RNA sequence: GGGAACGACUCGAGUAGAGUCGAAAACAAUGACGCCAUCGUUUUCUGGGUCUUCGAAGCAGUUGCAAAGAAAUGCCCAGAUGGAGGACAGAGGGCCAAACCACCCCAGUGAAUUCAUAACAGGAGACCAAGGGCAUACUUUCGAGUAUGCCCUUGGAAAAGAAACAACAACAACAAC
Reactivity to 2A3 in 0.01 (KOAc 150mM, MgCl2 10mM, bicine 150mM(pH8.5), 24C), signal-to-noise 2, nucleotides 027 to 126: c080a020a050u110g040a010c030g000c000c000a140u010c000g040u060u060u090u000c020u000g000g000g040u000c030u000u000c040g030a100a020g000c000a070g100u300u300g030c020a060a090a000g090a030a030a030u110g000c000c000c000a020g000a010u010g040g040a050g000g070a000c010a000g050a070g000g000g000c000c020a130a010a040c050c000a040c000c000c000c000a000g050u000g130a130a030u160u130c040a000u090a110a140c040a140g000g100a030g080a000
Reactivity to DMS in 0.01 (KOAc 150mM, MgCl2 10mM, bicine 150mM(pH8.5), 24C), signal-to-noise 2, nucleotides 027 to 126: c140a120a070u030g000a090c130g000c000c000a070u000c040g000u010u000u000u050c000u000g010g020g010u040c260u000u000c040g000a140a300g000c020a280g000u070u090g010c010a080a070a300g010a000a020a030u040g000c000c000c000a000g010a110u020g010g040a050g000g070a070c030a080g030a210g000g000g000c010c070a000a030a120c010c010a120c010c000c000c070a080g010u010g000a080a120u000u000c100a000u070a080a090c130a150g050g000a120g020a110